[RMDB]
RNA sequence: GGGAACGACUCGAGUAGAGUCGAAAAGCAAUCAAUGCGGUGGCGGGAAUCCUUUCCAUUGCUUCUGUCGCCGCCUUUGGCACAGCGUUUUUCGUGUUUACCAAAGCCCGAUACAAAAGCAUUGCGCGGAUUUCAGAGCAAAUCGAUCUUGUGCUUACACCAUCCGAUAGUUCGCUAUCGGAUGGUGAAAAGAAACAACAACAACAAC
Reactivity to 2A3 in 0.01 (KOAc 150mM, MgCl2 10mM, bicine 150mM(pH8.5), 24C), signal-to-noise 2, nucleotides 027 to 156: g030c030a040a050u110c020a010a080u120g000c000g030g050u030g000g000c000g000g040g010a030a070u100c080c000u130u100u020c060c040a080u040u120g030c000u020u030c000u000g040u040c020g000c030c010g010c000c000u040u020u020g010g000c010a010c050a050g040c050g030u030u000u000u180u260c060g000u040g100u090u080u100a070c020c020a030a000a000g030c020c020c000g060a050u090a200c030a030a170a000a000g010c020a020u060u160g010c100g030c040g060g020a010u060u050u070c130a140g010a030g030c010a090a100a080u030c020g040a010u020c030u150u140g050u060g010c000u030u020a010
Record summary:
An RNA of 207 nucleotides, treated with 2A3 and read out base by base.